Structure probing data (DMS) for a 177-nucleotide construct.
The reactions ran in a buffer of 150 mM KOAc, 10 mM MgCl2 and 150 mM bicine (pH 8.5), at 24 C.
Values cover nucleotides 27 to 126.
Values are in units of 0.01, from 0 to 300, in steps of 10.
Source: RMDB library OK2TST, as collected in RNAgym.

RNA sequence: GGGAACGACUCGAGUAGAGUCGAAAAGCGUGGUGGACGUGGUUGAUGGUCUCAAGCUGUGGGUAUUUCUUCAGUGCAACAGCGUCGAAGCUGCCCUGCUCACCCAUCAUGGUGAAGACAGCGCGCAUGAGUUAGUGCACUUCGGUGCACUAACUCAAAAAGAAACAACAACAACAAC
Reactivity to DMS in 0.01 (KOAc 150mM, MgCl2 10mM, bicine 150mM(pH8.5), 24C), signal-to-noise 2, nucleotides 027 to 126: g020c060g040u000g000g010u010g000g020a050c120g050u000g000g020u010u000g020a070u000g010g000u000c030u010c090a070a130g040c040u000g040u010g000g020g020u000a080u010u000u010c090u000u010c080a090g060u010g000c020a020a110c060a060g020c010g020u000c110g010a050a090g040c190u000g000c030c020c040u000g000c050u010c070a040c040c000c140a110u020c250a050u020g010g010u010g030a050a050g000a110c010a040g000c200g020c090g020c100a140